Structure probing data (2A3 and DMS) for a 207-nucleotide construct. DMS (dimethyl sulfate) methylates the pairing face of unpaired adenines and cytosines. The reactions ran in a buffer of 150 mM KOAc, 10 mM MgCl2 and 150 mM bicine (pH 8.5), at 24 C. DMS adducts were read by reverse transcription with MarathonRT. The data come from the RNA Mapping Database (RMDB), library OK3TST.
[RMDB]
RNA sequence: GGGAACGACUCGAGUAGAGUCGAAAAUAAACGUGUUAAACAUGGUGAUUUAUGGAUAGCCAACUAUACAUCUAAAUUCAGUAACCGUAGGUAUUUGUGUACCGUAACUACAAAAAAUGGUGACUGUGUUCAGGGUAUAGUUAGAUCUCAUAUUAAACCACACACCUUUAUUCGUAAAGGUGUGUGGAAAAGAAACAACAACAACAAC
Reactivity to 2A3 in 0.01 (KOAc 150mM, MgCl2 10mM, bicine 150mM(pH8.5), 24C), signal-to-noise 6, nucleotides 027 to 156: u120a000a070a010c070g020u050g050u110u200a110a140a060c060a060u080g010g040u070g060a160u090u100u070a050u050g020g020a020u030a040g140c030c020a010a000c000u000a000u010a010c020a080u060c030u030a010a030a030u010u020c000a000g020u010a000a030c000c020g030u040a050g000g020u040a070u040u250u260g240u100g010u050a010c010c000g020u030a060a050c080u160a050c120a030a120a010a030a010a020u130g000g000u010g020a010c000u000g000u000g010u020u010c010a010g010g000g010u010a000u000a010g000u000u010a020g010a020u010c080u020c070a010u040a020u080u150a110a050a030
Reactivity to DMS in 0.01 (KOAc 150mM, MgCl2 10mM, bicine 150mM(pH8.5), 24C), signal-to-noise 2, nucleotides 027 to 156: u020a090a090a080c050g020u000g030u000u000a110a100a250c020a010u010g000g020u000g020a150u000u000u000a090u000g020g010a210u000a120g000c000c030a010a020c010u000a010u000a010c010a050u000c020u010a010a020a010u000u000c000a030g010u000a020a020c020c020g050u000a090g020g010u000a050u000u000u020g050u000g030u000a030c060c080g000u020a060a070c110u020a280c110a020a020a050a090a060a030u000g040g030u000g000a010c010u000g020u000g040u000u000c010a010g000g020g010u000a000u000a000g020u000u000a060g010a070u000c060u000c020a070u000a100u000u020a070a090a200